RNA sequence: GGGAACGACUCGAGUAGAGUCGAAAAGAUAUGGAGUUACAGCUUCGAUAAGCUGCUACUCGGAAACGAGUACAGCUUUUGACGAAGCACUCCUAAGUCAAAACUCUAAAGCUUCGGCUUUAGAGAAGAAAGCAGAAGAGUUCGCUCUUCUGCUUUCAAAAGAAACAACAACAACAAC
Reactivity to DMS in 0.01 (KOAc 150mM, MgCl2 10mM, bicine 150mM(pH8.5), 24C), signal-to-noise 2, nucleotides 027 to 126: g000a020u000a300u020g000g010a020g010u010u010a150c230a210g010c000u000u000c020g000a170u000a030a000g000c010u000g010c300u010a010c010u000c010g010g020a050a070a170c010g020a050g000u000a020c000a000g010c010u000u000u000u000g000a140c040g060a020a040g030c020a070c000u010c020c000u000a050a110g000u010c010a110a110a200a110c010u000c000u010a000a030a000g000c010u010u030c250g020g020c000u000u000u000a000g000a000g010a060a050
Reactivity to 2A3 in 0.01 (KOAc 150mM, MgCl2 10mM, bicine 150mM(pH8.5), 24C), signal-to-noise 1, nucleotides 027 to 126: g020a010u030a020u100g010g020a030g030u160u230a170c040a090g010c000u000u020c000g070a110u040a180a020g000c000u000g000c150u000a000c000u000c010g000g000a030a100a000c000g000a000g020u000a010c000a020g040c000u060u040u020u050g050a050c010g000a000a000g020c000a020c000u000c020c000u010a110a000g020u030c050a000a050a030a300c010u000c010u010a000a000a000g000c010u020u230c300g080g000c000u020u000u000a020g000a000g000a000a030